Source information:
Conditions: 150 mM KOAc, 10 mM MgCl2 and 150 mM bicine (pH 8.5), 24 C. This 207-nucleotide RNA was probed chemically with 2A3. It was measured as part of the RMDB library M2RFPK. The 2A3 profile rests on 512 reads.
RNA sequence: GGGAACGACUCGAGUAGAGUCGAAAAGAAAGAAAGAAGCGAGCGGGCGCAGCCGCACGGGCAACCGUCAAUCCAGCACUUCACAAGUCUUGUCGUUCUGACAGGACAUCCAUCAACCCACCGGGAAAAAAGGACUACAGCUUCGGCUGUAGUCCAACUAUAGGUGCUUGUUCGCAAGCACCUAUAGAAAAGAAACAACAACAACAAC
Reactivity to 2A3 in 0.01 (KOAc 150mM, MgCl2 10mM, bicine 150mM(pH8.5), 24C), signal-to-noise 1, nucleotides 027 to 156: g050a020a050a000g030a040a140a000g050a040a010g030c060g060a010g040c060g020g040g020c040g010c020a000g060c020c010g060c010a040c050g080g020g000c010a080a040c000c000g000u010c020a010a100u080c010c010a010g000c020a020c060u060u050c060a040c030a160a250g000u020c000u010u010g000u000c010g100u300u150c100u220g000a010c000a010g000g000a000c000a020u000c010c000a020u100c030a000a100c000c000c000a040c020c070g000g010g140a130a010a070a000a000a000g000g010a050c000u000a010c000a000g020c000u050u230c300g110g000c000u020g010u000a010g020u000c000c000a000a000